The record gives the reactivity of an RNA of 207 nucleotides to 2A3. For 2A3, 1,890 sequencing reads were counted. It was measured as part of the RMDB library VIROID.

[RMDB]
RNA sequence: GGGAACGACUCGAGUAGAGUCGAAAAGGCGUGGAGAGAGGGCCGCGGUGCUCUGGAGUAGAGGCUCUGCCUUCGAAACACCAUCGAUCGUCCCUUCUUCUUUACCUUCUUCUGGCUCUUCUUGGAGACGCGACCGGUGGCACCCCUGCUCGGUUCGGCUAUUGAGUAGGUUCGCCUACUCAAUAGCAAAAGAAACAACAACAACAAC
Reactivity to 2A3 in 0.01 (KOAc 150mM, MgCl2 10mM, bicine 150mM(pH8.5), 24C), signal-to-noise 2, nucleotides 027 to 156: g070g000c090g000u040g020g000a020g020a000g010a040g010g000g000c000c000g020c000g010g000u020g000c010u010c010u000g020g000a000g020u010a010g000a020g020g010c030u030c230u300g040c050c000u100u160c020g000a000a000a010c000a020c160c000a020u010c000g040a300u010c000g000u000c010c000c000u000u040c020u040u010c000u030u080u130a080c000c000u040u030c080u050u010c040u100g030g000c010u000c000u020u010c000u030u040g280g020a020g000a000c010g000c000g030a020c010c000g000g030u100g020g020c060a150c010c030c000c040u010g020c030u030c080g040g000u050u070c010g020